[RMDB]
The record gives the reactivity of an RNA of 207 nucleotides to 2A3 and DMS. For 2A3, 3,475 sequencing reads were counted. The RNA was probed in 150 mM KOAc, 10 mM MgCl2 and 150 mM bicine (pH 8.5) at 24 C. Values cover nucleotides 27 to 156.
RNA sequence: GGGAACGACUCGAGUAGAGUCGAAAACGUCGAUAUGCGGAUUCAUCAAGCUUACACGGACCAACAAGCCGCCCCUGCUUUAAAUAUGAAUAGCCAGUAUCAUUACGAGCAAACCAAUGUCCAACAUGUAUCACCGAAUACCUAUGGCGGCCAACUACCAUAUCUUAGGUUUCGACCUAAGAUAUGGAAAAGAAACAACAACAACAAC
Reactivity to 2A3 in 0.01 (KOAc 150mM, MgCl2 10mM, bicine 150mM(pH8.5), 24C), signal-to-noise 5, nucleotides 027 to 156: c040g040u060c060g020a040u020a040u180g060c080g040g040a050u100u060c020a060u090c060a090a040g040c030u070u080a040c050a020c080g050g020a060c040c020a040a090c040a100a020g010c000c000g020c000c030c010c010u000g010c020u100u060u130a070a190a060u250a060u060g050a020a020u020a070g050c040c010a020g030u030a030u070c010a010u030u040a030c090g010a010g040c030a050a010a100c020c020a060a090u070g030u040c010c020a040a030c030a150u100g030u030a030u040c020a050c190c030g060a120a010u070a080c020c020u090a060u110g030g000c000g020g000c020c000a040a020c030u130a030
Reactivity to DMS in 0.01 (KOAc 150mM, MgCl2 10mM, bicine 150mM(pH8.5), 24C), signal-to-noise 2, nucleotides 027 to 156: c060g000u000c040g010a100u000a030u010g000c000g020g010a200u000u010c020a080u000c090a140a120g020c040u000u000a120c080a090c020g000g000a040c010c060a140a120c030a070a120g010c000c010g010c050c020c060c110u000g020c000u000u000u010a060a060a160u010a070u000g000a040a080u000a080g010c020c040a080g010u000a120u000c050a090u000u010a140c100g010a160g020c030a080a170a040c080c050a040a070u010g010u010c020c010a060a080c060a060u000g030u000a060u000c010a240c030c030g000a060a080u000a050c050c070u000a040u000g020g010c020g030g070c030c000a020a080c060u010a200